[RMDB]
RNA sequence: GGGAACGACUCGAGUAGAGUCGAAAAGCGCCAACCGCAUCUUAUGCAGUUUUCCUUUUUUUGCCAGUGGAAAAGAGGAAACGAUCGGAUCGCUCCGUCAACUGGCACCUGGUGUACCUAUAUUUACCGCCGUGCAUAGUUUCGACUAUGCACGGCGAAAAGAAACAACAACAACAAC
Reactivity to 2A3 in 0.01 (KOAc 150mM, MgCl2 10mM, bicine 150mM(pH8.5), 24C), signal-to-noise 4, nucleotides 027 to 126: g020c030g010c020c000a050a100c050c000g030c020a020u030c040u070u300a200u210g080c040a030g020u010u000u030u070c000c010u060u030u030u000u000u020u190g070c040c030a050g100u140g020g060a030a000a000a000g120a060g040g000a030a020a000c040g010a050u130c060g000g030a060u090c040g000c020u020c010c010g110u110c040a070a030c000u000g030g000c010a030c000c020u040g010g000u030g010u060a070c000c050u060a030u050a150u230u130u120a060c040
The record gives the reactivity of an RNA of 177 nucleotides to 2A3. 2A3 is a SHAPE reagent: it acylates the 2'-hydroxyl of flexible nucleotides of all four kinds. For 2A3, 1,478 sequencing reads were counted. Values cover nucleotides 27 to 126. It was measured as part of the RMDB library OK1LIB. 2A3 adducts were read by reverse transcription with SuperScript II with manganese.